RNA sequence: GGGAACGACUCGAGUAGAGUCGAAAAGAUAUGGAUGCGAUGUACAGCUUGGACCUCGGAAACGAGCUAGCUGACAUUCGCAUCCUAAGUCAAAACUAAAUCCUGUCCUUCGGGACAGGAUUUAGAAGUGCUUUAAUACGUUCGCGUAUUAAAGCACAAAAGAAACAACAACAACAAC
Reactivity to DMS in 0.01 (KOAc 150mM, MgCl2 10mM, bicine 150mM(pH8.5), 24C), signal-to-noise 2, nucleotides 027 to 126: g000a040u020a300u000g000g010a010u000g020c010g030a040u000g000u000a160c010a000g010c020u000u000g050g000a110c300c010u000c000g050g000a110a070a120c010g030a010g010c020u010a030g020c000u000g000a060c000a000u010u010c000g040c000a000u000c000c000u000a000a040g010u010c030a050a080a150a180c000u000a000a010a000u000c000c000u000g000u000c000c000u000u020c240g040g000g000a000c010a000g000g000a000u000u000u010a000g000a070a090
Reactivity to 2A3 in 0.01 (KOAc 150mM, MgCl2 10mM, bicine 150mM(pH8.5), 24C), signal-to-noise 3, nucleotides 027 to 126: g020a020u070a010u140g000g000a000u000g020c000g000a000u010g040u060a300c000a010g000c030u070u120g070g120a260c060c000u000c010g000g040a050a070a060c010g000a000g000c010u010a000g040c010u000g020a000c010a010u060u060c000g000c000a000u000c000c000u000a000a000g010u010c010a020a010a100a140c010u000a000a010a000u010c000c010u010g000u010c000c010u070u080c300g040g000g000a000c000a000g000g000a000u000u000u000a000g000a020a020

Annotation
This 177-nucleotide RNA was probed chemically with DMS and 2A3. The 2A3 profile rests on 4,852 reads. 2A3 adducts were read by reverse transcription with SuperScript II with manganese. Reactivities are rounded to 0.1 and cut off at 0 and 3. Conditions: 150 mM KOAc, 10 mM MgCl2 and 150 mM bicine (pH 8.5), 24 C. The data come from the RNA Mapping Database (RMDB), library TTRDEL.